Structure probing data (2A3 and DMS) for a 177-nucleotide construct.
The 2A3 profile rests on 1,079 reads.
It was measured as part of the RMDB library OK2TRN.
The reactions ran in a buffer of 150 mM KOAc, 10 mM MgCl2 and 150 mM bicine (pH 8.5), at 24 C.
RNA sequence: GGGAACGACUCGAGUAGAGUCGAAAAGUAAAGCACCUGUUAAAAUGAAGGACAGAUUUAUCACCUUGAUUACGGCGGUGAUGGGACCUGAUCCCAGCAGUCACAAGUCACAGGGGAAGGUCCCUGAGCUCUAGAUUGGUUUCGACCAAUCUAGAGCAAAAGAAACAACAACAACAAC
Reactivity to 2A3 in 0.01 (KOAc 150mM, MgCl2 10mM, bicine 150mM(pH8.5), 24C), signal-to-noise 2, nucleotides 027 to 126: g040u050a040a110a000g050c010a050c050c050u100g070u040u090a220a300a060a020u080g080a000a060g000g010a120c190a080g040a080u090u120u140a150u140c030a070c080c000u040u080g110a040u010u060a020c090g030g010c030g000g000u030g040a010u020g000g000g010a000c010c010u020g060a110u100c020c040c000a010g050c010a020g090u120c090a000c020a150a170g040u130c050a030c030a130g000g000g000g000a000a000g000g000u000c030c000c020u010g000a020
Reactivity to DMS in 0.01 (KOAc 150mM, MgCl2 10mM, bicine 150mM(pH8.5), 24C), signal-to-noise 2, nucleotides 027 to 126: g000u000a020a100a170g010c030a060c020c000u000g020u000u020a200a170a130a070u000g010a040a050g000g000a070c200a060g000a100u000u000u000a040u000c050a120c010c050u000u000g000a060u000u020a140c290g000g000c040g010g000u000g010a070u000g020g000g020a010c010c020u010g010a250u010c020c000c020a040g030c050a080g010u000c140a030c180a050a090g000u010c060a080c090a120g000g000g000g000a250a030g000g010u000c000c000c000u010g000a140